[RMDB]
Description:
Source: RMDB library TTRDES, as collected in RNAgym. Chemical mapping of a 177-nucleotide RNA with 2A3 and DMS. Values are in units of 0.01, from 0 to 300, in steps of 10. For DMS the reverse transcriptase was MarathonRT.
RNA sequence: GGGAACGACUCGAGUAGAGUCGAAAAGAUAUGGAUCUUGUACAGCGAAGAACACACUCGGAAACGAGUGUGGGAGCUGCUACACUGGAUCCUAAGUCAAAUCUUAAACGCUUCGGCGUUUAAGAAAGACAUGCUAUUACUUCGGUAAUAGCAUGUCAAAAGAAACAACAACAACAAC
Reactivity to 2A3 in 0.01 (KOAc 150mM, MgCl2 10mM, bicine 150mM(pH8.5), 24C), signal-to-noise 4, nucleotides 027 to 126: g020a010u040a010u070g010g000a010u000c030u190u290g020u030a010c010a000g040c060g280a300a020g040a030a000c000a000c000a000c000u000c000g000g000a020a020a020c000g010a000g000u000g000u010g000g000g000a010g000c010u020g010c100u030a000c070a050c160u150g180g010a000u000c000c000u000a030a000g020u000c030a080a030a260u020c010u000u000a000a000a020c000g020c000u090u130c300g160g000c000g000u010u000u000a010a000g000a020a000a000
Reactivity to DMS in 0.01 (KOAc 150mM, MgCl2 10mM, bicine 150mM(pH8.5), 24C), signal-to-noise 4, nucleotides 027 to 126: g000a020u000a210u010g000g010a000u000c010u020u010g010u000a070c000a010g010c010g010a080a180g000a150a230c000a010c000a000c010u000c000g000g000a080a060a120c010g010a030g010u000g010u000g000g000g000a030g030c030u000g020c280u000a010c040a100c300u010g000g010a000u000c000c000u000a020a150g000u000c030a120a140a140u000c000u000u000a000a010a020c000g020c010u000u010c300g020g010c000g010u000u010u000a000a000g000a030a080a080

The RNA was probed in 150 mM KOAc, 10 mM MgCl2 and 150 mM bicine (pH 8.5) at 24 C. For DMS, 3,922 sequencing reads were counted. For 2A3 the reverse transcriptase was SuperScript II with manganese.